[RMDB]
RNA sequence: GGGAACGACUCGAGUAGAGUCGAAAAAGCUUUACUGCAGGCUGUCGCUGGGACACGGUCGCUGAUGUGCAGAGUAGGUAGGAGACGUUACACAGGUACGUGCGCUAGCACGCCACCGAGUCACACACACACAUACUGACUUCGGUCAGUAUGUGUGAAAAGAAACAACAACAACAAC
Reactivity to 2A3 in 0.01 (KOAc 150mM, MgCl2 10mM, bicine 150mM(pH8.5), 24C), signal-to-noise 1, nucleotides 027 to 126: a000g080c070u110u130u020a050c020u070g150c050a060g040g040c080u040g010u130c060g000c020u060g000g100g030a030c020a020c050g060g000u040c050g040c090u080g040a150u040g100u060g070c000a000g020a040g120u060a080g050g000u060a040g000g060a100g000a010c010g000u000u040a000c050a000c010a000g020g030u040a020c030g010u010g000c010g000c070u020a050g030c000a000c010g040c040c010a000c020c000g000a010g010u030c010a040c000a000c000a010
Reactivity to DMS in 0.01 (KOAc 150mM, MgCl2 10mM, bicine 150mM(pH8.5), 24C), signal-to-noise 2, nucleotides 027 to 126: a090g010c030u000u000u040a160c070u000g010c080a030g010g000c010u010g080u000c110g040c080u000g000g000g000a130c050a100c050g010g000u000c040g020c040u010g020a050u000g000u010g000c030a050g010a080g020u000a040g040g000u000a050g000g010a160g000a010c020g000u000u010a010c050a060c040a050g010g000u000a060c010g030u000g010c010g010c270u030a110g020c000a020c010g000c000c020a020c020c010g020a030g000u000c060a050c100a100c120a230